[RMDB]
RNA sequence: GGGAACGACUCGAGUAGAGUCGAAAAUGUGAGCCAAGCGUCAUGUGGUUUUAGGCAGCCUAGAGGGGCCUAGAGGACACUGAGCCAGGCAUCAGGAGGGCUGCGUGCUAAAACUUCGUGUGCUGCCCAUAUAGGGCGCAUUCGUGCGCCCUAUAUGAAAAGAAACAACAACAACAAC
Reactivity to DMS in 0.01 (KOAc 150mM, MgCl2 10mM, bicine 150mM(pH8.5), 24C), signal-to-noise 9, nucleotides 027 to 126: u000g010u010g010a140g020c070c110a120a060g010c010g010u000c010a020u000g010u000g000g010u000u000u000u000a010g000g010c000a010g020c010c010u000a210g000a170g000g000g000g010c010c000u000a070g010a210g010g000a090c060a140c240u010g010a150g030c000c030a110g000g010c000a050u000c020a060g010g000a240g010g000g000c000u000g010c020g020u010g030c020u000a010a010a020a030c020u000u010c020g040u000g020u000g000c000u000g010c050c060
Reactivity to 2A3 in 0.01 (KOAc 150mM, MgCl2 10mM, bicine 150mM(pH8.5), 24C), signal-to-noise 5, nucleotides 027 to 126: u150g040u050g040a030g040c050c050a070a010g020c020g110u100c040a010u040g010u020g000g040u010u000u010u010a010g020g000c010a000g000c000c010u060a080g040a100g110g030g020g030c000c000u110a160g060a130g230g010a040c110a040c300u200g020a060g050c010c000a000g000g000c020a100u060c020a030g110g060a070g060g000g000c000u020g000c030g030u090g040c000u010a010a010a010a020c000u020u020c010g010u010g010u010g000c020u030g010c010c010
Chemical mapping of a 177-nucleotide RNA with DMS and 2A3. The 2A3 profile rests on 9,783 reads. Reactivities are given for positions 27 through 126. For 2A3 the reverse transcriptase was SuperScript II with manganese.